Structure probing data (2A3) for a 207-nucleotide construct.
It was measured as part of the RMDB library VIROID.
2A3 adducts were read by reverse transcription with SuperScript II with manganese.
For 2A3, 797 sequencing reads were counted.
[RMDB]
RNA sequence: GGGAACGACUCGAGUAGAGUCGAAAAGCUUGUUCCCAUUGUCGCGUACACCAAAUUCCCGCAUGUCGCCACCAACCAUCCCGUGUGGAUGGCCCUCCCAACUUACCUUUCCUCUGCAUCAUGUAGCUACGUCCAUCCGAUGAACGUCCACCCCGGGGCAGUCUUUAAACUUCGGUUUAAAGACUGCAAAAGAAACAACAACAACAAC
Reactivity to 2A3 in 0.01 (KOAc 150mM, MgCl2 10mM, bicine 150mM(pH8.5), 24C), signal-to-noise 2, nucleotides 027 to 156: g080c060u090u080g010u080u000c050c020c030a010u000u160g040u040c040g040c020g050u090a000c060a000c050c110a010a100a120u170u050c000c000c010g090c030a040u110g030u080c020g050c040c010a030c030c060a040a090c000c030a010u040c000c000c020g190u200g110u300g110g000a000u010g000g000c000c030c000u000c000c000c010a000a050c070u140u150a060c000c000u010u090u000c030c000u000c030u030g040c030a080u020c010a080u190g060u100a000g060c030u060a010c050g020u000c000c000a020u030c020c040g000a000u070g030a070a040c000g010u000c000c020a040c020c000c020c030g010g010g010

The RNA was probed in 150 mM KOAc, 10 mM MgCl2 and 150 mM bicine (pH 8.5) at 24 C.